[RMDB]
RNA sequence: GGGAACGACUCGAGUAGAGUCGAAAAUACGCUUGAUUUUGUCUCGCCAACCCACCAAAAAUACGAUUUGAGUAUCGCUCUCAGGCAAGUGGCCGGACAGCCGUUUUACCUCGGAUCUUUAGCGGCGCCUACCAUUCCUCUUCGGAGGAAUGGUAGGAAAAGAAACAACAACAACAAC
Reactivity to DMS in 0.01 (KOAc 150mM, MgCl2 10mM, bicine 150mM(pH8.5), 24C), signal-to-noise 1, nucleotides 027 to 126: u010a110c190g030c010u010u030g010a120u020u000u020u010g000u000c040u000c110g010c060c070a080a150c030c030c020a130c110c130a020a100a100a080a100u000a070c130g020a080u000u000u030g000a120g010u000a040u000c060g010c060u000c020u010c000a070g000g030c060a040a120g020u000g020g010c010c000g000g010a090c060a060g020c060c060g000u000u000u020u000a090c110c030u010c060g000g000a050u000c070u000u000u000a070g000c000g010g000c180g060
Reactivity to 2A3 in 0.01 (KOAc 150mM, MgCl2 10mM, bicine 150mM(pH8.5), 24C), signal-to-noise 1, nucleotides 027 to 126: u140a020c020g000c060u030u040g020a090u170u190u080u240g030u060c020u030c020g030c030c000a060a070c020c020c010a020c020c080a130a030a090a000a050u170a090c000g050a110u040u100u230g060a050g070u070a070u110c030g060c050u070c000u000c010a020g000g000c010a090a090g090u060g220g010c000c020g000g020a030c000a000g000c000c010g030u050u030u060u110a050c030c020u040c000g000g070a110u000c000u130u160u130a040g000c090g020g050c030g000
Chemical mapping of a 177-nucleotide RNA with DMS and 2A3. For 2A3 the reverse transcriptase was SuperScript II with manganese. Conditions: 150 mM KOAc, 10 mM MgCl2 and 150 mM bicine (pH 8.5), 24 C. The data come from the RNA Mapping Database (RMDB), library OK2TRN.